[RMDB]
RNA sequence: GGGAACGACUCGAGUAGAGUCGAAAAUAUUGCCAUGGGCGUGGAUGAGUCUGCGGGUCAUGAACAGGGUGCCGGUGACCAGGGGCUGAUGUUUGGCUAUGCCACCAAUGAAACGGGUGUGCUGAUGAAAUUAGCACGUAUUCGUACGUGCUAAUUUAAAAGAAACAACAACAACAAC
Reactivity to DMS in 0.01 (KOAc 150mM, MgCl2 10mM, bicine 150mM(pH8.5), 24C), signal-to-noise 9, nucleotides 027 to 126: u010a100u000u010g010c040c030a080u000g010g000g020c050g030u000g010g010a080u000g010a110g010u000c040u000g020c050g000g000g010u000c040a070u000g010a080a100c120a090g010g010g020u010g010c050c050g010g020u000g010a070c060c050a090g000g000g010g000c050u010g000a060u000g010u000u000u000g010g000c050u000a110u010g000c020c000a040c030c020a040a080u010g010a050a090a130c260g000g000g010u000g000u010g020c020u010g000a110u010g000
Reactivity to 2A3 in 0.01 (KOAc 150mM, MgCl2 10mM, bicine 150mM(pH8.5), 24C), signal-to-noise 4, nucleotides 027 to 126: u160a030u070u160g030c030c020a040u060g090g020g000c090g050u040g060g030a070u050g010a040g100u050c050u080g010c050g040g000g050u060c050a070u090g050a060a050c050a050g020g060g030u030g040c020c000g000g050u030g030a030c020c020a030g000g020g030g000c030u030g030a070u070g100u050u130u070g020g000c010u030a030u130g010c010c010a010c010c010a070a090u180g090a170a070a020c050g020g000g020u020g020u070g000c030u030g010a060u130g010
This 177-nucleotide RNA was probed chemically with DMS and 2A3. For DMS the reverse transcriptase was MarathonRT. Values are in units of 0.01, from 0 to 300, in steps of 10. The 2A3 profile rests on 5,484 reads. The RNA was probed in 150 mM KOAc, 10 mM MgCl2 and 150 mM bicine (pH 8.5) at 24 C. The DMS profile rests on 23,957 reads.